RNA sequence: GGGAACGACUCGAGUAGAGUCGAAAACAACCGGUGAAAUCAACGGUAAAAGCGCUCCUGUGAAAGACUUCGCGGCAACUUUUGUUGCUAUCGUACUAAGCAGGCGACCAGCAAACAAACAAGGUGGCCUAUUACCGAGUUUCGACUCGGUAAUAGGAAAAGAAACAACAACAACAAC
Reactivity to 2A3 in 0.01 (KOAc 150mM, MgCl2 10mM, bicine 150mM(pH8.5), 24C), signal-to-noise 3, nucleotides 027 to 126: c030a000a020c010c010g010g070u140g060a160a100a150u220c040a050a080c000g000g020u090a080a040a050a110g080c120g000c050u030c000c000u030g020u020g040a300a300a060g020a110c110u060u030c100g020c040g050g020c000a000a010c000u110u130u280u300g000u000u010g000c000u000a060u160c020g010u000a060c010u030a040a040g000c000a010g000g010c020g040a050c020c030a000g090c050a000a130a130c030a040a100a000c040a090a050g100g000u070g070g080
Reactivity to DMS in 0.01 (KOAc 150mM, MgCl2 10mM, bicine 150mM(pH8.5), 24C), signal-to-noise 3, nucleotides 027 to 126: c090a110a040c030c010g000g020u010g000a120a090a090u000c070a060a090c020g000g010u010a070a070a130a120g010c110g030c110u000c010c000u000g010u000g000a120a090a130g000a060c070u000u010c040g000c300g010g020c010a000a010c000u000u000u000u000g020u000u010g000c000u000a040u000c070g010u000a070c030u030a050a250g000c040a030g000g000c170g000a070c090c050a100g020c080a060a060a050c140a090a060a080c130a070a080g000g010u000g000g000